[RMDB]
Source information:
An RNA of 177 nucleotides, treated with DMS and 2A3 and read out base by base. For 2A3, 3,619 sequencing reads were counted. The RNA was probed in 150 mM KOAc, 10 mM MgCl2 and 150 mM bicine (pH 8.5) at 24 C. High 2A3 reactivity points to a flexible backbone, as in loops and unpaired stretches.
RNA sequence: GGGAACGACUCGAGUAGAGUCGAAAAGAUCACCUGUUCGCAGGUGAUCAAUCUCCCACUUGAUCGAAGUCUCACAGCCUCGUUGCCCAGGAGGCACGGGCGUAUUGAUCCGCUUCGGCGGAUCAAAGAAUCAUGUAGCGUUCGCGCUACAUGAUUCAAAAGAAACAACAACAACAAC
Reactivity to DMS in 0.01 (KOAc 150mM, MgCl2 10mM, bicine 150mM(pH8.5), 24C), signal-to-noise 3, nucleotides 027 to 126: g000a010u000c010a020c000c000u000g010u000u010c170g020c030a000g030g010u000g000a000u000c000a050a100u010c200u000c000c000c000a140c090u000u000g000a060u000c050g010a070a110g000u000c040u000c060a090c220a160g010c010c000u010c060g020u000u000g000c000c010c060a210g010g010a170g050g020c000a010c000g000g000g000c020g010u010a010u010u000g000a000u000c010c000g000c000u000u010c150g060g000c000g000g000a010u000c000a000a030a070
Reactivity to 2A3 in 0.01 (KOAc 150mM, MgCl2 10mM, bicine 150mM(pH8.5), 24C), signal-to-noise 3, nucleotides 027 to 126: g000a010u010c000a000c000c000u020g030u060u080c280g020c130a000g000g000u030g030a010u010c000a000a000u020c010u000c000c010c000a030c060u090u190g090a130u140c080g070a140a050g160u030c020u050c060a130c000a050g030c020c010u170c130g150u210u120g020c030c010c040a150g170g090a150g060g000c000a000c000g010g000g000c020g000u010a030u040u040g010a010u010c000c000g020c020u060u050c220g050g000c010g000g000a000u000c000a000a010a010